An RNA of 177 nucleotides, treated with 2A3 and DMS and read out base by base. The 2A3 profile rests on 805 reads. Source: RMDB library OK2TST, as collected in RNAgym. 2A3 adducts were read by reverse transcription with SuperScript II with manganese. The DMS profile rests on 1,068 reads. Conditions: 150 mM KOAc, 10 mM MgCl2 and 150 mM bicine (pH 8.5), 24 C.
[RMDB]
RNA sequence: GGGAACGACUCGAGUAGAGUCGAAAAUUGGGUGUCCGAGUGGCCCUCCCGUGGCCUGCUCUGUGGCUGUGUCAGAGCCAGACCCCCAGUGUCUGGGAAACAGCAGUCGGUCCUGGGGUGAGGCGCACCCCUAGCAGCGUUUCGACGCUGCUAGGGGAAAAGAAACAACAACAACAAC
Reactivity to 2A3 in 0.01 (KOAc 150mM, MgCl2 10mM, bicine 150mM(pH8.5), 24C), signal-to-noise 1, nucleotides 027 to 126: u130u050g070g000g000u050g050u090c000c040g080a080g060u050g060g010c000c000c040u020c000c000c020g010u100g050g040c000c020u020g030c040u080c000u020g110u090g000g080c040u030g000u050g070u150c070a030g010a060g290c010c010a000g020a050c000c000c000c070c000a020g090u080g020u300c020u020g020g070g000a090a180a040c010a020g080c000a000g060u050c000g000g000u030c030c030u030g000g000g000g070u040g040a100g070g040c030g050c050a040
Reactivity to DMS in 0.01 (KOAc 150mM, MgCl2 10mM, bicine 150mM(pH8.5), 24C), signal-to-noise 1, nucleotides 027 to 126: u020u000g000g030g000u000g010u000c020c070g000a160g030u010g020g020c000c030c010u000c020c020c070g040u020g000g000c040c000u000g050c020u000c040u000g000u000g000g000c010u020g000u000g020u020c110a160g000a220g000c010c040a020g000a130c100c030c080c130c120a150g020u010g010u020c020u000g010g000g030a090a080a020c050a020g010c040a050g020u010c080g060g010u020c020c070u010g010g000g000g070u030g000a130g000g000c010g040c100a130